[RMDB]
RNA sequence: GGGAACGACUCGAGUAGAGUCGAAAAGCACCGCCGCAGUGCAGCCAACCGCCUACCGCACACACGCUGCCCGAGCCUGCUACUGUCGCAGUCAUACCCGGUCCGGGGCCGGACCCGGGUAGGCGUAGGAUUAUCAUGCAUUCGUGCAUGAUAAUCCAAAAGAAACAACAACAACAAC
Reactivity to 2A3 in 0.01 (KOAc 150mM, MgCl2 10mM, bicine 150mM(pH8.5), 24C), signal-to-noise 2, nucleotides 027 to 126: g000c010a020c100c060g100c020c020g000c020a030g010u030g060c000a020g070c010c010a010a040c010c020g020c020c000u030a040c010c030g050c000a000c000a000c000a010c090g030c020u050g000c000c000c020g010a020g000c000c020u040g000c020u050a080c020u120g080u100c050g020c080a020g030u030c010a100u020a040c020c010c000g000g000u000c010c010g010g000g260g030c160c000g010g010a040c080c210c000g010g000g000u010a010g020g000c030g050u020a070
Reactivity to DMS in 0.01 (KOAc 150mM, MgCl2 10mM, bicine 150mM(pH8.5), 24C), signal-to-noise 3, nucleotides 027 to 126: g020c070a080c030c050g010c050c030g020c060a080g030u020g030c030a070g000c040c050a090a140c070c030g050c020c020u000a060c060c040g020c060a070c070a090c070a060c110g020c040u000g020c040c010c020g000a090g010c050c030u000g000c040u010a090c090u000g020u000c140g040c040a090g000u000c050a110u000a050c010c000c000g010g000u000c000c010g020g000g000g020c130c010g000g000a010c060c070c050g010g000g020u000a010g000g010c020g030u010a080